[RMDB]
RNA sequence: GGGAACGACUCGAGUAGAGUCGAAAAAUGGUAGUUGGUCUACUCGCUAUCCUAGUUACUUUGGAGUAAUCUAAAGUGUGUGUAAACGGGCGAAAGUCUGUAAAAUACUGGGGACAUAGGGUCAACAAGAACUAGUAGACCUUCGGGUCUACUAGAACACUUACGCUAGGUUCGCCUAGCGUAAGUGAAAAGAAACAACAACAACAAC
Reactivity to 2A3 in 0.01 (KOAc 150mM, MgCl2 10mM, bicine 150mM(pH8.5), 24C), signal-to-noise 3, nucleotides 027 to 156: a010u160g030g020u060a110g000u010u010g020g020u020c010u030a050c030u040c050g030c050u070a030u130c010c000u020a020g020u040u040a040c010u010u010u010g030g000a030g040u090a150a160u000c000u010a000a000a000g030u030g010u010g010u000g040u090a100a140a070c020g000g010g000c020g040a060a020a020g010u000c010u000g040u050a000a000a080a050u130a050c030u020g000g000g000g020a010c020a060u140a060g050g000g020u030c030a010a020c020a050a060g070a040a010c000u000a000g010u000a000g000a010c010c000u010u030c170g020g010g000u010c000u000a000c000u000a000g000a000a000
Reactivity to DMS in 0.01 (KOAc 150mM, MgCl2 10mM, bicine 150mM(pH8.5), 24C), signal-to-noise 2, nucleotides 027 to 156: a110u020g040g000u010a030g020u000u010g020g000u020c010u010a090c040u000c070g060c070u010a110u000c000c000u010a100g020u000u000a050c000u000u000u000g030g000a020g000u010a100a150u000c020u020a030a010a040g000u000g030u000g020u000g010u000a050a170a070c020g020g020g030c010g000a150a140a180g030u000c000u000g010u000a030a060a040a070u000a030c030u020g000g030g000g020a060c060a060u000a060g000g010g030u010c000a040a080c030a070a140g030a120a160c030u000a000g040u000a000g000a030c000c000u020u010c300g060g020g030u000c000u000a000c000u000a000g000a040a140
Conditions: 150 mM KOAc, 10 mM MgCl2 and 150 mM bicine (pH 8.5), 24 C.
This 207-nucleotide RNA was probed chemically with 2A3 and DMS.
Values cover nucleotides 27 to 156.
DMS (dimethyl sulfate) methylates the pairing face of unpaired adenines and cytosines.
As a SHAPE reagent, 2A3 marks flexible, mostly unpaired nucleotides at the ribose 2'-OH.
DMS adducts were read by reverse transcription with MarathonRT.